[RMDB]
RNA sequence: GGGAACGACUCGAGUAGAGUCGAAAACGGACAACAUGUUACUAUAGCAUUAAUGUCGUACAAAGGUAUCAAUCAAGAGGAUGGAAUUAUCAUCAAAAAACAAUUUAUUCAGAGAGGCGGUCUCGAUAUUGUUACAGCCAAGAAACAUCAAGUAGAACCGCAUUAAGGAGUUCGCUCCUUAAUGCGGAAAAGAAACAACAACAACAAC
Reactivity to 2A3 in 0.01 (KOAc 150mM, MgCl2 10mM, bicine 150mM(pH8.5), 24C), signal-to-noise 1, nucleotides 027 to 156: c070g010g010a010c030a040a010c000a070u050g000u160u110a100c000u050a080u140a020g060c020a000u020u030a140a130u180g010u110c070g000u090a000c000a010a010a040g140g050u160a090u140c090a110a020u030c010a070a010g010a010g090g080a070u030g070g000a040a080u100u220a030u070c010a000u050c020a000a060a060a000a000a090c010a000a000u060u090u120a090u230u170c050a000g010a000g010a010g070g120c060g000g000u030c030u000c000g050a000u000a000u070u020g010u000u070a040c020a010g040c000c050a020a000g050a050a020a010c050a020u060c020a030a000g050u010a010g050a030a010